[RMDB]
RNA sequence: GGGAACGACUCGAGUAGAGUCGAAAAGAUAUGGACCGAUAUCUCUAGCGUGCACAACAGCUCGGAAACGAGACAUGUGUCGGGUAUACGGUCCUAAGUCAAAGCAUAGUACUUCGGUACUAUGCAAGAUCUUGAACUACUUCGGUAGUUCAAGAUCAAAAGAAACAACAACAACAAC
Reactivity to 2A3 in 0.01 (KOAc 150mM, MgCl2 10mM, bicine 150mM(pH8.5), 24C), signal-to-noise 3, nucleotides 027 to 126: g010a000u060a040u110g000g000a000c000c000g000a020u010a010u000c100u010c050u090a110g190c060g300u300g030c050a010c020a100a200c060a150g080c000u010c010g000g030a020a040a010c010g020a010g090a040c040a120u090g010u010g040u070c120g000g000g020u000a020u040a110c030g010g000u000c000c000u000a030a000g010u000c040a130a070a000g000c000a010u010a000g000u000a000c000u040u030c300g080g000u010a000c000u010a010u000g020c000a010a000
Reactivity to DMS in 0.01 (KOAc 150mM, MgCl2 10mM, bicine 150mM(pH8.5), 24C), signal-to-noise 3, nucleotides 027 to 126: g000a020u000a260u000g000g010a000c000c000g020a060u000a010u000c000u000c220u020a140g050c230g000u000g010c020a010c020a020a070c290a200g000c010u000c010g000g000a040a090a160c020g010a000g010a040c150a110u000g010u000g000u000c040g000g000g000u000a000u000a110c000g000g010u000c000c000u000a010a080g000u000c050a100a070a150g000c000a020u000a000g000u000a000c000u000u000c300g010g010u000a000c010u010a010u010g010c010a010a040